[RMDB]
An RNA of 207 nucleotides, treated with DMS and 2A3 and read out base by base. The 2A3 profile rests on 1,884 reads. The reactions ran in a buffer of 150 mM KOAc, 10 mM MgCl2 and 150 mM bicine (pH 8.5), at 24 C. Source: RMDB library OK3TST, as collected in RNAgym.
RNA sequence: GGGAACGACUCGAGUAGAGUCGAAAAUAUGCCACGUCGUUCAAGGUAUGCCUCAGCUGGUGAACCAGCUAAAGAUUCAUGAUAAGUCUUAGCUGCUUUAGUCCAGAGUUCAAUGAGUUUCGGAUUGGUUCUCACUUCUUCUCCUGUCUGUGUGUAACUAAAUCAACGCUUUCGAGCGUUGAUUUAGAAAAGAAACAACAACAACAAC
Reactivity to DMS in 0.01 (KOAc 150mM, MgCl2 10mM, bicine 150mM(pH8.5), 24C), signal-to-noise 2, nucleotides 027 to 156: u000a080u010g000c030c030a120c100g000u000c020g000u000u010c030a130a130g000g040u000a050u010g020c050c020u000c040a130g040c030u000g010g050u000g000a040a100c110c000a030g050c010u000a020a050a050g020a030u000u000c090a180u010g020a230u000a030a060g010u000c030u010u000a040g020c000u000g050c080u000u000u000a130g010u000c040c020a030g000a240g010u020u000c050a050a120u000g000a120g020u000u000u000c010g030g000a100u000u000g020g010u000u010c020u000c020a070c040u000u010c030u000u000c050u000c010c000u000g000u000c030u000g010u000g000u010g050u000a070a190
Reactivity to 2A3 in 0.01 (KOAc 150mM, MgCl2 10mM, bicine 150mM(pH8.5), 24C), signal-to-noise 3, nucleotides 027 to 156: u250a040u070g010c020c020a050c040g070u060c040g010u050u080c030a060a040g030g000u060a060u140g030c010c010u040c030a010g000c030u030g000g050u040g020a020a010c010c010a000g000c000u020a040a030a020g020a000u060u090c070a060u250g170a140u160a210a030g010u000c000u040u010a000g000c000u020g000c010u050u080u120a080g030u010c000c000a000g020a040g040u080u130c050a060a080u130g010a040g050u020u050u070c080g000g060a030u020u040g070g000u070u020c030u000c030a030c040u050u010c000u060u010c000u010c010c020u030g040u060c050u060g050u010g020u030g020u090a040a020